[RMDB]
RNA sequence: GGGAACGACUCGAGUAGAGUCGAAAACUCAAUGACUUCGGUCAUUGAGAAAGGACAAAAGUCCAACUGAGCAGCUAUGAGCUGAUACAUCGUCAUAGCAAAAAACACACACGUUCGCGUGUGUGAAGUUAUCGGGACAGUUCGCUGUCCCGAUAACAAAAGAAACAACAACAACAAC
Reactivity to 2A3 in 0.01 (KOAc 150mM, MgCl2 10mM, bicine 150mM(pH8.5), 24C), signal-to-noise 1, nucleotides 027 to 126: c000u000c000a000a010u000g000a000c000u010u070c160g030g000u000c010a000u000u010g000a000g000a050a020a000g000g000a010c030a060a300a060a060g030u010c000c020a000a030c020u060g030a010g000c000a010g000c010u000a000u020g010a010g020c020u000g040a080u090a190c110a110u120c090g050u000c000a000u000a000g000c000a060a040a000a000a020a040c050a000c000a000c000a000c010g030u060u070c260g020c010g110u010g000u010g000u000g010a020a000
Reactivity to DMS in 0.01 (KOAc 150mM, MgCl2 10mM, bicine 150mM(pH8.5), 24C), signal-to-noise 1, nucleotides 027 to 126: c000u000c000a000a040u000g000a010c000u040u010c140g010g020u000c010a010u000u000g000a020g030a030a050a110g020g000a000c000a050a040a120a180g000u010c000c000a070a240c090u000g000a070g000c020a120g000c000u000a000u040g010a020g000c010u010g010a080u010a140c200a070u010c130g010u000c000a030u000a000g050c070a010a000a070a030a040a140c000a000c010a000c010a000c000g020u000u000c300g010c010g000u020g000u000g000u000g010a060a000